[RMDB]
RNA sequence: GGGAACGACUCGAGUAGAGUCGAAAAACAACAAGAGAGUUAUAGUGUUAUCAUUCAAGUGUUAAGAGGAGAGUCAACAGAUUAUAUUAAGUAUAAAGGUUAUGACCAAAUUUCAACCCAUGGUUUAAACAGGGAAAAGGUUCGCCUUUUCCCUGUUAAAAGAAACAACAACAACAAC
Reactivity to 2A3 in 0.01 (KOAc 150mM, MgCl2 10mM, bicine 150mM(pH8.5), 24C), signal-to-noise 2, nucleotides 027 to 126: a000c050a000a000c030a070a010g080a000g000a040g100u110u020a150u160a050g050u100g190u240u140a020u130c040a010u150u000c000a090a130g000u000g030u210u070a080a000g040a040g040g020a010g030a040g000u000c000a000a050c030a110g040a030u050u050a000u020a010u040u160a160a080g080u110a080u040a000a110a000g170g020u100u090a100u180g030a000c000c000a010a010a010u070u120u060c020a030a010c000c000c100a110u050g040g020u080u080u120a060
Reactivity to DMS in 0.01 (KOAc 150mM, MgCl2 10mM, bicine 150mM(pH8.5), 24C), signal-to-noise 3, nucleotides 027 to 126: a120c080a060a080c100a090a090g000a090g000a120g040u000u000a050u030a140g020u030g000u020u020a020u000c020a040u020u010c060a070a090g020u010g000u000u030a100a080g000a110g020g020a270g000a030g040u010c060a000a040c050a120g010a090u000u020a010u010a010u000u050a070a130g000u000a030u010a020a010a070g000g000u040u020a040u010g000a070c030c020a020a130a080u010u000u010c120a030a030c030c020c020a060u020g000g010u030u000u010a010